The record gives the reactivity of an RNA of 177 nucleotides to DMS and 2A3. 2A3 is a SHAPE reagent: it acylates the 2'-hydroxyl of flexible nucleotides of all four kinds. Conditions: 150 mM KOAc, 10 mM MgCl2 and 150 mM bicine (pH 8.5), 24 C.
[RMDB]
RNA sequence: GGGAACGACUCGAGUAGAGUCGAAAAGGAGGAGCCGAUAUUGCAGGUCAAAUUGAAGCACAAGGAGUUCUUGUCAGAGAUUUGAAGAACAAGGAUUCCAAAUCUCAAGAAACAAAGGAUGCUAUUAGGAUGACUAAUUAUUCGUAAUUAGUCAUCCAAAAGAAACAACAACAACAAC
Reactivity to DMS in 0.01 (KOAc 150mM, MgCl2 10mM, bicine 150mM(pH8.5), 24C), signal-to-noise 7, nucleotides 027 to 126: g010g020a080g010g010a100g020c020c050g010a130u010a060u010u010g010c080a060g010g010u000c060a050a080a110u000u000g000a140a100g010c090a060c110a090a150g000g010a060g020u000u000c020u000u000g000u010c060a160g010a140g010a110u000u000u000g010a130a110g000a090a020c040a060a070g010g000a110u000u000c010c010a030a070a050u010c030u000c020a080a060g010a080a070a050c140a050a060a110g000g000a080u000g000c050u000a080u000u000a140
Reactivity to 2A3 in 0.01 (KOAc 150mM, MgCl2 10mM, bicine 150mM(pH8.5), 24C), signal-to-noise 5, nucleotides 027 to 126: g040g010a010g020g020a020g020c010c010g020a020u030a030u080u110g040c050a030g010g040u060c040a030a020a090u090u080g050a050a010g000c050a030c030a100a070g020g010a050g020u030u020c010u020u030g030u040c060a030g030a050g020a250u120u120u250g120a140a060g030a030a000c030a030a040g060g010a050u020u000c000c000a010a020a040u020c010u020c030a050a040g080a080a100a020c080a040a060a040g040g010a060u080g030c040u050a110u170u160a090